[RMDB]
RNA sequence: GGGAACGACUCGAGUAGAGUCGAAAAGCAAGCUAGCCGGCAAAAAAGCAAACUUGACCACCAAGGAUUAAAGAGAUCUUAUCCAAGGAUGCAAAAGAUAAUCUCACUUUUGACACCCACUGAUCUCAAAACGUGCGGUUCUUCGGAACCGCACGAACUCUGAUCUUCUCUUCGGAGAAGAUCAGAGAAAAGAAACAACAACAACAAC
Reactivity to 2A3 in 0.01 (KOAc 150mM, MgCl2 10mM, bicine 150mM(pH8.5), 24C), signal-to-noise 1, nucleotides 027 to 156: g010c010a010a010g000c020u040a010g010c020c000g110g020c090a060a150a030a000a000a070g060c040a070a060a020c010u040u030g080a050c030c000a010c060c000a150a030g090g010a050u080u120a120a060a040g010a000g010a010u020c010u050u170a040u070c080c070a070a030g050g000a060u020g010c010a000a020a000a000g020a080u130a190a270u200c120u070c020a010c000u000u030u000u030g100a160c000a010c000c040c000a010c050u000g010a010u000c040u000c000a050a000a000a020c000g000u000g020c000g000g030u000u000c060u030u040c040g100g000a000a000c000c000g000c020a000c000g000a000a000

Chemical mapping of a 207-nucleotide RNA with 2A3. For 2A3 the reverse transcriptase was SuperScript II with manganese. It was measured as part of the RMDB library M2RFPK.